[RMDB]
RNA sequence: GGGAACGACUCGAGUAGAGUCGAAAACGAGACGCGAAUCCGUGAGUGGAAACCCUGUUUAUUCACUGGGGUCGACAACUCUGGGGAGAAAAGGGAGGUUCGGGUGGGAAGAGUAUAUCCUACGGGAGAUAUGAUAUUAGUUCGCUAAUAUCAUAUCAAAAGAAACAACAACAACAAC
Reactivity to 2A3 in 0.01 (KOAc 150mM, MgCl2 10mM, bicine 150mM(pH8.5), 24C), signal-to-noise 7, nucleotides 027 to 126: c010g030a010g040a020c060g020c040g100a050a040u040c020c030g100u040g030a010g000u020g000g040a030a030a030c010c000c000u030g080u060u210u090a290u160u200c090a040c150u120g010g000g000g030u010c010g030a030c010a140a060c010u010c020u030g060g020g010g000a120g090a050a100a010a020g030g020g030a120g060g030u140u190c050g020g010g050u230g040g030g000a050a030g040a020g070u050a050u020a010u150c010c010u030a050c160g050g010g010a070
Reactivity to DMS in 0.01 (KOAc 150mM, MgCl2 10mM, bicine 150mM(pH8.5), 24C), signal-to-noise 6, nucleotides 027 to 126: c080g010a110g010a130c180g010c090g010a120a090u000c020c020g010u000g010a050g030u000g000g010a210a080a050c030c030c010u010g010u000u000u010a080u020u010c160a060c090u010g020g000g000g010u000c050g020a270c170a050a070c000u000c010u000g000g010g010g000a130g000a040a060a060a110g010g000g010a140g000g000u000u000c110g000g010g000u000g000g010g010a050a060g000a050g000u010a070u010a100u000c010c010u000a080c120g010g000g010a150